[RMDB]
RNA sequence: GGGAACGACUCGAGUAGAGUCGAAAAGAUAUGGAAUCCCAGGUAGCAACAGCCACUUGUCGGAAACGACAAUGUGGACAUGCUACUGGGAUUCCUAAGUCAAACGAAUUGUGUUCGCACAAUUCGACGUGUUCGUAAACUUCGGUUUACGAACACGAAAAGAAACAACAACAACAAC
Reactivity to DMS in 0.01 (KOAc 150mM, MgCl2 10mM, bicine 150mM(pH8.5), 24C), signal-to-noise 1, nucleotides 027 to 126: g010a030u000a150u020g000g030a020a000u010c000c000c010a030g040g050u010a000g040c020a130a110c300a090g000c000c000a000c010u000u000g010u010c000g020g010a030a070a080c010g010a010c000a010a000u020g010u000g000g010a010c070a250u010g010c000u000a050c020u000g020g020g000a000u000u000c000c000u020a000a050g010u000c010a080a130a290c060g000a020a010u010u000g010u000g000u000u020c300g020c000a010c000a010a020u010u010c010g000a040
Reactivity to 2A3 in 0.01 (KOAc 150mM, MgCl2 10mM, bicine 150mM(pH8.5), 24C), signal-to-noise 1, nucleotides 027 to 126: g000a000u040a040u030g010g000a020a010u020c000c000c010a020g020g120u040a000g000c150a090a210c130a300g000c030c000a010c000u020u030g000u000c000g000g000a000a010a010c010g000a010c000a010a020u260g000u000g040g010a000c000a100u300g000c020u010a010c010u000g000g000g000a000u000u000c000c000u000a010a010g000u000c030a070a000a080c020g030a030a000u030u000g010u000g080u080u120c300g020c090a000c000a010a030u050u030c030g040a120